[RMDB]
RNA sequence: GGGAACGACUCGAGUAGAGUCGAAAACUUGUUGCAACGCUCGUUGCUAGGGGUGAAUCCGAAAGGACGGGCAUCUCUCCAAGCCCGAACCCGACAGCUAACCUCGCAAGCGCUUUGGGGAGGGACGCAUAUAACGAAUCUUCGGAUUCGUUAUAUGAAAAGAAACAACAACAACAAC
Reactivity to 2A3 in 0.01 (KOAc 150mM, MgCl2 10mM, bicine 150mM(pH8.5), 24C), signal-to-noise 9, nucleotides 027 to 126: c020u050u100g060u100u130g050c020a020a020c030g080c160u150c190g050u020u030g010c010u030a070g000g020g000g010u050g090a090a040u020c010c010g020a080a040a020g020g000a010c010g010g000g000c020a050u040c020u000c000u000c020c010a030a020g000c010c000c000g010a040a040c000c000c000g020a020c010a010g000c020u050a060a090c020c030u070c060g040c090a090a050g040c040g010c110u050u050u050g010g000g000g010a020g010g020g020a020c050g010
Reactivity to DMS in 0.01 (KOAc 150mM, MgCl2 10mM, bicine 150mM(pH8.5), 24C), signal-to-noise 9, nucleotides 027 to 126: c070u000u010g010u010u010g010c030a030a050c030g010c130u020c170g010u000u000g000c010u000a090g000g000g010g000u000g010a120a130u010c000c010g010a110a110a150g000g000a100c010g000g000g000c000a090u010c040u000c020u010c020c030a070a080g000c000c000c000g000a080a030c010c000c000g010a150c090a060g000c040u010a090a120c040c040u000c080g010c090a090a050g000c090g010c140u000u000u000g010g000g000g000a040g000g010g000a090c160g010
Structure probing data (2A3 and DMS) for a 177-nucleotide construct. 2A3 adducts were read by reverse transcription with SuperScript II with manganese. Conditions: 150 mM KOAc, 10 mM MgCl2 and 150 mM bicine (pH 8.5), 24 C. It was measured as part of the RMDB libraries RFM100 and RFMREP.